[RMDB]
Conditions: 150 mM KOAc, 10 mM MgCl2 and 150 mM bicine (pH 8.5), 24 C. The record gives the reactivity of an RNA of 207 nucleotides to 2A3. Reactivities are rounded to 0.1 and cut off at 0 and 3. Source: RMDB library RNAMAK, as collected in RNAgym.
RNA sequence: GGGAACGACUCGAGUAGAGUCGAAAAGGGGUCUUGUGAAGAAGCUGUAUUGUCAGCUGUACAGGCUGAAGCCUCCACGGCCUGUAUACAGCUUGGAUUUAUACAGCGUACCACAAGACGGAGGCACCCAAAACUCACGUGAUUCGUCACGUGAGAAUCUAUUCGCCGGUUUCGACCGGCGAAUAGAAAAAGAAACAACAACAACAAC
Reactivity to 2A3 in 0.01 (KOAc 150mM, MgCl2 10mM, bicine 150mM(pH8.5), 24C), signal-to-noise 2, nucleotides 027 to 156: g200g040g020g030u000c020u030u020g010u010g100a270a290g100a210a040g000c010u000g020u030a040u050u010g110u140c100a030g000c000u000g000u000a010c000a030g000g000c000u000g020a060a030g000c010c000u000c000c010a020c010g000g030c010c000u000g020u010a210u080a010c010a000g020c020u190u270g110g020a070u070u300u140a000u030a010c000a010g000c000g000u000a010c000c000a000c010a000a010g010a000c000g000g010a000g000g000c000a030c000c020c020a040a130a060a130c000u000c000a000c000g000u000g000a010u040u100c180g040u020c120a000c000g010u000g000a000g000a000a020